[RMDB]
Chemical mapping of a 177-nucleotide RNA with 2A3 and DMS.
Values are in units of 0.01, from 0 to 300, in steps of 10.

RNA sequence: GGGAACGACUCGAGUAGAGUCGAAAAAUCAAGAAUGGAAUACUCAGACAAAGCCCAGACUUUGGAGAGCGCCACAUUGCGUUAUUCCUUAAAUCCCAAUGGGUGAAGAAAAAUGAGAAAAUCGGCAGUAUGAAAAUAAUUUCGAUUAUUUUCAUACAAAAGAAACAACAACAACAAC
Reactivity to 2A3 in 0.01 (KOAc 150mM, MgCl2 10mM, bicine 150mM(pH8.5), 24C), signal-to-noise 2, nucleotides 027 to 126: a000u140c060a100a010g110a120a180u150g030g060a020a050u110a190c020u030c070a020g030a090c030a060a100a000g000c000c020c020a060g050a110c100u110u070u030g010g010a020g010a000g040c020g000c050c000a170c060a210u040u210g000c000g020u040u030a100u110u050c000c020u010u070a150a100a080u030c000c020c000a000a010u000g010g000g010u020g040a060a030g090a030a120a030a010a020u100g000a040g040a040a060a010a110u020c020g020g000c000a000
Reactivity to DMS in 0.01 (KOAc 150mM, MgCl2 10mM, bicine 150mM(pH8.5), 24C), signal-to-noise 3, nucleotides 027 to 126: a080u000c060a110a110g020a140a120u010g000g000a110a060u020a100c010u000c020a030g000a230c040a080a070a190g000c000c050c110a050g020a120c100u000u000u000g000g040a110g000a050g020c100g000c030c180a070c200a080u010u020g010c060g000u000u000a060u010u000c000c010u000u000a030a120a120u000c000c020c020a130a120u010g000g000g010u000g010a060a100g010a010a080a040a090a090u010g010a040g000a100a070a070a100u000c020g010g010c250a080

The DMS profile rests on 2,310 reads.